[RMDB]
RNA sequence: GGGAACGACUCGAGUAGAGUCGAAAAGGUUCACACCCCCAACCGGCGGGCCGGCUGCUCUUCUUUCCCUUCUCUCGUCUUCCUCGGUCAACCUCUUGAGUUCCCCUUCUUCCUCCUCGCUGAGGCGCGAAGUAUAAUGGUUCGCCAUUAUACUUCGAAAAGAAACAACAACAACAAC
Reactivity to 2A3 in 0.01 (KOAc 150mM, MgCl2 10mM, bicine 150mM(pH8.5), 24C), signal-to-noise 2, nucleotides 027 to 126: g060g000u140u110c080a050c010a000c140c000c010c000c010a020a030c040c010g030g020c000g020g010g020c010c000g040g010c020u030g030c010u010c000u110u040c020u040u060u010c000c000c000u030u030c010u020c020u020c010g040u020c020u050u050c010c010u000c010g030g020u030c030a020a070c010c010u030c000u060u040g030a010g030u010u020c000c000c000c000u030u060c020u020u030c010c020u020c000c010u040c030g080c120u060g020a010g030g000c020g030
Reactivity to DMS in 0.01 (KOAc 150mM, MgCl2 10mM, bicine 150mM(pH8.5), 24C), signal-to-noise 7, nucleotides 027 to 126: g000g020u010u000c090a080c100a300c050c010c010c020c040a130a110c100c040g000g020c060g010g010g020c050c050g010g010c050u000g010c050u000c040u000u010c050u000u000u010c030c010c010u000u000c030u010c020u010c040g010u010c020u000u000c040c020u000c040g010g000u000c050a060a120c080c010u000c050u000u000g000a170g000u000u000c010c010c010c160u000u000c050u010u000c020c010u000c020c020u010c100g010c090u000g000a070g010g010c300g010